[RMDB]
RNA sequence: GGGAACGACUCGAGUAGAGUCGAAAAACAUGGCAGAGACAUACGCCGGAAAACCGUAGAGAUACGGUCUGCCUUGUAGUCGGUGUACAGGAGGUGCAAGCCUGUCAUUACGUAAUGUCGUACGCUGAGAUAUUUAGUUAUUCGUAACUAAAUAUCUAAAAGAAACAACAACAACAAC
Reactivity to 2A3 in 0.01 (KOAc 150mM, MgCl2 10mM, bicine 150mM(pH8.5), 24C), signal-to-noise 9, nucleotides 027 to 126: a000c030a040u050g020g000c010a010g020a000g020a060c010a040u130a040c040g030c010c000g020g010a060a060a000a000c000c000g000u000a010g010a000g000a050u010a010c000g000g000u000c000u020g030c000c000u020u060g050u020a040g030u030c030g000g010u030g010u020a020c010a010g020g030a030g030g070u130g070c050a040a020g090c010c000u000g010u010c010a020u020u110a040c050g030u080a060a070u050g010u020c010g010u010a010c020g000c020u010g000
Reactivity to DMS in 0.01 (KOAc 150mM, MgCl2 10mM, bicine 150mM(pH8.5), 24C), signal-to-noise 9, nucleotides 027 to 126: a050c050a050u020g000g010c000a020g000a150g010a080c090a080u010a080c080g010c050c050g000g010a070a060a110a090c010c000g020u000a010g000a200g000a180u000a010c000g000g000u000c030u010g000c030c020u010u010g010u010a050g010u010c040g010g010u010g000u030a020c020a030g000g000a080g010g010u020g010c200a080a100g000c010c000u000g000u000c030a030u010u020a100c120g010u010a060a060u010g010u000c020g000u010a080c080g010c020u000g000
Source information:
Structure probing data (2A3 and DMS) for a 177-nucleotide construct. It was measured as part of the RMDB library OK1LIB. DMS adducts were read by reverse transcription with MarathonRT. Conditions: 150 mM KOAc, 10 mM MgCl2 and 150 mM bicine (pH 8.5), 24 C. Reactivities are given for positions 27 through 126.